[RMDB]
RNA sequence: GGGAACGACUCGAGUAGAGUCGAAAAUUCGUGGUCUCCUGUCAAUCACAGGAUACUAAUUGCACACUGGGCGGUACACCGCUCACAGUAUUGACUUAAGUCGGUGGUAAGUCUGUGUGGAGAUCGAAGCAGUAGUAGGCUUCGGCCUACUACUGCUAAAAGAAACAACAACAACAAC
Reactivity to DMS in 0.01 (KOAc 150mM, MgCl2 10mM, bicine 150mM(pH8.5), 24C), signal-to-noise 2, nucleotides 027 to 126: u000u000c090g050u000g000g020u000c000u000c000c010u020g010u000c220a160a130u000c140a010c020a020g010g020a050u000a020c010u020a050a110u000u020g000c070a070c060a110c120u000g010g000g000c000g000g010u000a250c190a080c000c000g030c000u000c030a030c110a140g020u020a090u020u000g000a110c070u010u000a080a080g000u000c060g020g010u000g000g000u000a050a110g000u000c000u000g030u000g000u000g000g020a060g020a010u000c040g000a110
Reactivity to 2A3 in 0.01 (KOAc 150mM, MgCl2 10mM, bicine 150mM(pH8.5), 24C), signal-to-noise 2, nucleotides 027 to 126: u030u010c040g010u120g060g020u020c000u030c000c030u100g160u130c100a120a240u100c020a030c000a010g020g000a010u010a040c000u050a000a090u080u170g010c030a000c000a010c050u110g000g040g000c000g000g060u120a060c130a030c040c010g060c000u010c010a020c000a010g030u010a180u160u190g180a040c000u090u090a170a000g060u130c010g000g050u060g010g120u300a100a040g060u070c000u000g000u030g070u020g060g020a040g000a030u080c060g030a020